[RMDB]
RNA sequence: GGGAACGACUCGAGUAGAGUCGAAAAGUAAGGAUGCCACCGUGACGGCUCAAUCACACAAGUGCCAACGAUAACGAGGCGCUCGCUAUUGCUGCGUAACUGACGGCCUGACGGUCUGACGUUACAAAAAACGAAAAGUGGUUCGCCACUUUUCGAACGAAAUUAGCAUGUUCGCAUGCUAAUUUCGAAAAGAAACAACAACAACAAC
Reactivity to DMS in 0.01 (KOAc 150mM, MgCl2 10mM, bicine 150mM(pH8.5), 24C), signal-to-noise 2, nucleotides 027 to 156: g020u020a090a020g020g020a040u020g000c060c010a090c030c140g060u000g000a140c050g060g030c040u000c030a080a150u030c040a080c060a080c100a130a130g060u010g000c040c030a060a180c000g020a090u010a120a070c040g000a220g020g090c050g040c060u040c000g020c000u010a060u000u000g000c000u000g000c050g030u030a010a110c040u000g000a300c300g000g000c010c000u000g030a080c290g060g010u000c030u000g000a300c170g000u000u000a020c020a000a020a050a090a090a130c030g010a040a020a020a030g040u000g030g000u000u000c250g020c010c000a020c010u010u000u000u030c000g040a000a180
Reactivity to 2A3 in 0.01 (KOAc 150mM, MgCl2 10mM, bicine 150mM(pH8.5), 24C), signal-to-noise 4, nucleotides 027 to 156: g070u060a050a010g080g030a050u070g040c040c020a050c050c040g040u040g050a060c080g010g000c020u020c090a050a130u120c030a040c010a020c000a130a090g030u010g020c010c000a090a050c100g070a130u100a190a030c060g010a050g090g010c050g010c060u030c020g040c030u090a070u140u220g030c060u060g000c030g020u010a020a010c010u020g010a020c010g010g000c000c010u110g080a060c090g000g000u000c000u010g010a010c030g040u010u020a010c010a000a060a000a000a010a010c010g000a000a000a000a000g000u010g030g010u030u050c140g040c030c010a010c000u010u000u000u000c000g000a040a010